[RMDB]
RNA sequence: GGGAACGACUCGAGUAGAGUCGAAAACCUCAAGUUUCUUGAGCUUCUUGUUGGUUCGCCGGAGAUCCUUCUCGAGAAUUCGCCUUUUCUUCCUUUCUUCCACCCACUGCUCGAGGAUCUCCUCCCUAUCCAUAUUCUACUUCGGUAGAAUAUGGAUAAAAGAAACAACAACAACAAC
Reactivity to 2A3 in 0.01 (KOAc 150mM, MgCl2 10mM, bicine 150mM(pH8.5), 24C), signal-to-noise 2, nucleotides 027 to 126: c000c010u040c010a030a060g020u000u060u110c030u070u090g040a030g060c010u080u030c030u060u100g030u030u080g000g030u050u040c010g030c070c050g020g000a010g020a030u010c010c020u080u060c060u060c030g040a050g030a110a150u130u110c040g070c020c000u070u050u060u050c020u050u070c010c030u110u050u050c000u090u000c020c010a020c020c020c000a040c050u050g030c000u000c020g010a000g020g000a030u010c000u000c020c000u010c010c000c000u000
Reactivity to DMS in 0.01 (KOAc 150mM, MgCl2 10mM, bicine 150mM(pH8.5), 24C), signal-to-noise 1, nucleotides 027 to 126: c070c000u010c080a100a050g000u010u010u020c010u020u010g000a120g010c060u010u010c060u000u010g020u000u000g000g010u000u010c080g040c110c090g000g010a040g000a060u000c020c020u000u010c080u010c040g010a090g020a120a150u010u000c070g010c040c020u000u000u030u000c060u000u000c030c010u000u000u000c070u000u000c030c050a110c010c030c030a110c070u000g010c030u010c010g000a030g010g010a090u000c030u000c020c020u010c000c010c030u000
Structure probing data (2A3 and DMS) for a 177-nucleotide construct. Conditions: 150 mM KOAc, 10 mM MgCl2 and 150 mM bicine (pH 8.5), 24 C. The data come from the RNA Mapping Database (RMDB), library 15KREP. Reactivities are given for positions 27 through 126. For 2A3 the reverse transcriptase was SuperScript II with manganese.